Chemical mapping of a 177-nucleotide RNA with DMS and 2A3.
[RMDB]
RNA sequence: GGGAACGACUCGAGUAGAGUCGAAAACGUGCGUACUGGGCCGCCGGCACAAUGUUCUACCCAGCCGUCUCAGAGGACGCGGUUCGACAACGAUCAGCCAGCCGGUCAGCGGGGUCCUCCUAGCUAGACUGGCUGGGCGAUUCGUCGCCCAGCCAGUAAAAGAAACAACAACAACAAC
Reactivity to DMS in 0.01 (KOAc 150mM, MgCl2 10mM, bicine 150mM(pH8.5), 24C), signal-to-noise 3, nucleotides 027 to 126: c070g010u000g000c030g020u000a090c020u010g000g020g010c090c110g020c050c040g010g010c060a060c080a110a110u010g020u000u010c100u010a110c060c020c050a140g000c070c020g010u010c060u010c080a130g010a180g010g010a040c040g010c060g000g000u010u000c100g010a040c050a090a050c100g000a040u000c060a110g000c010c010a030g000c020c010g000g000u000c020a040g010c010g000g010g000g000u020c170c150u010c000c000u010a060g020c040u000a090g010
Reactivity to 2A3 in 0.01 (KOAc 150mM, MgCl2 10mM, bicine 150mM(pH8.5), 24C), signal-to-noise 1, nucleotides 027 to 126: c010g060u050g050c000g000u070a070c020u030g000g040g020c070c030g030c030c020g030g000c050a020c020a080a170u150g030u090u050c040u050a110c000c020c000a030g030c000c000g010u000c020u030c080a130g030a140g190g030a010c010g000c030g020g000u050u050c060g020a050c040a140a060c040g020a110u040c010a010g100c020c000a000g000c010c000g000g020u020c000a030g030c010g000g000g000g020u210c020c000u080c030c000u010a050g000c030u020a060g010

For 2A3, 1,551 sequencing reads were counted. 2A3 is a SHAPE reagent: it acylates the 2'-hydroxyl of flexible nucleotides of all four kinds.